[RMDB]
RNA sequence: GGGAACGACUCGAGUAGAGUCGAAAAGACUUGCAAGACAGAAACACAGAGUUGUCUUAUCAGCUUAUGCUGGAUGCACUGGGUGACAGAACCAGAUACUUUUCCAUGUGGAACCAGGCCGUAGAUAGCUACGAUCCAGAUGUAAGAAUAAUUGAAAGAUUCGGUCUACUUUCGAGUAGACCGAAUCAAAAGAAACAACAACAACAAC
Reactivity to 2A3 in 0.01 (KOAc 150mM, MgCl2 10mM, bicine 150mM(pH8.5), 24C), signal-to-noise 1, nucleotides 027 to 156: g000a020c060u100u100g070c030a010a000g070a000c060a050g080a110a100a000c040a040c000a180g010a010g110u070u040g000u000c040u060u080a100u160c050a030g000c000u050u060a010u200g010c000u000g030g000a010u070g020c010a000c140u040g000g000g100u010g060a030c020a070g110a030a050c000c000a000g000a160u120a070c060u000u060u030u170c060c000a040u120g040u100g020g000a030a010c050c020a040g020g080c010c010g000u030a030g000a140u180a020g130c010u010a000c010g070a030u000c000c000a090g060a160u020g020u050a000a070g100a180a040u200a160a050u190u200g080a050a020a060

An RNA of 207 nucleotides, treated with 2A3 and read out base by base. The data come from the RNA Mapping Database (RMDB), library OK3TST. The 2A3 profile rests on 390 reads. The RNA was probed in 150 mM KOAc, 10 mM MgCl2 and 150 mM bicine (pH 8.5) at 24 C.